[RMDB]
RNA sequence: GGGAACGACUCGAGUAGAGUCGAAAAGGGCCCGACGCCCCUGAUCUGGAGAGCACUCCGGCCCGAAGGGUUGAGUAGCACCCAGAGGGAGGAAAUCACACGGAGAGAAACAGACAAAUCACCUCCAAAAGCAAGCCGUUCGCGGCUUGCAAAAGAAACAACAACAACAAC
Reactivity to DMS in 0.01 (KOAc 150mM, MgCl2 10mM, bicine 150mM(pH8.5), 24C), signal-to-noise 2, nucleotides 027 to 129: g070g020g000c060c000c000g000a140c070g020c130c020c000c000u050g040a150u010c020u000g010g030a060g010a100g040c160a130c040u010c020c060g070g000c030c000c010g020a300a180g000g000g000u010u020g020a000g050u050a040g030c020a080c010c000c040a040g010a300g000g000g000a080g010g020a070a130a100u010c210a130c100a070c190g000g070a040g000a070g040a100a170a070c060a090g020a050c130a050a020a110u020c060a180c000c050u070c030c060a050a120a080a100
Reactivity to 2A3 in 0.01 (KOAc 150mM, MgCl2 10mM, bicine 150mM(pH8.5), 24C), signal-to-noise 3, nucleotides 027 to 129: g050g020g010c000c010c020g000a050c060g030c010c010c000c000u000g030a100u050c010u000g010g040a070g000a000g010c020a000c030u010c020c050g080g000c010c010c020g010a040a010g080g000g000u010u010g010a070g040u190a000g000c010a050c010c000c000a000g010a000g040g010g000a030g020g020a020a110a040u270c010a080c020a010c050g010g000a010g010a020g010a040a090a000c050a010g110a010c030a000a020a040u070c000a040c000c020u010c030c020a010a140a040a000
An RNA of 170 nucleotides, treated with DMS and 2A3 and read out base by base. The DMS profile rests on 4,096 reads. DMS adducts were read by reverse transcription with MarathonRT. Source: RMDB library 15KLIB, as collected in RNAgym.